[RMDB]
RNA sequence: GGGAACGACUCGAGUAGAGUCGAAAAGUAUGGGCCGACGUUACUGAUCCGAUUCUUUUGGCCCUUUGUCCUCCAUCGCCAAGUCCAAGCUCAACUAGCUCAACUUCCAGUGACGACUCCGCCGAUACAUGAUCAGCUAUUUCGAUAGCUGAUCAUGAAAAGAAACAACAACAACAAC
Reactivity to DMS in 0.01 (KOAc 150mM, MgCl2 10mM, bicine 150mM(pH8.5), 24C), signal-to-noise 6, nucleotides 027 to 126: g020u000a050u020g000g010g030c020c020g000a060c230g010u010u000a060c130u000g000a120u010c070c060g000a120u010u000c050u000u000u010u010g020g010c010c010c020u000u000u000g020u000c020c020u000c080c060a060u000c080g010c020c050a070a130g020u000c030c050a080a090g010c040u000c060a090a090c100u010a080g010c030u000c060a050a060c080u000u010c040c030a070g010u000g000a100c060g010a070c050u010c030c030g000c040c020g000a110u000a130
Reactivity to 2A3 in 0.01 (KOAc 150mM, MgCl2 10mM, bicine 150mM(pH8.5), 24C), signal-to-noise 3, nucleotides 027 to 126: g060u050a070u120g010g020g020c010c020g030a070c070g060u100u100a070c040u070g070a100u040c030c060g100a190u020u130c070u040u150u090u090g010g000c000c020c000u010u080u050g020u000c000c010u000c010c010a110u040c030g000c040c010a020a010g010u000c020c000a050a010g000c000u020c020a070a100c070u060a020g030c020u020c040a040a060c040u090u040c020c010a040g000u030g050a030c040g020a020c020u000c000c010g040c030c000g050a000u020a100
Record summary
The record gives the reactivity of an RNA of 177 nucleotides to DMS and 2A3. For DMS the reverse transcriptase was MarathonRT. The data come from the RNA Mapping Database (RMDB), library OK2TST. Conditions: 150 mM KOAc, 10 mM MgCl2 and 150 mM bicine (pH 8.5), 24 C. The 2A3 profile rests on 4,321 reads.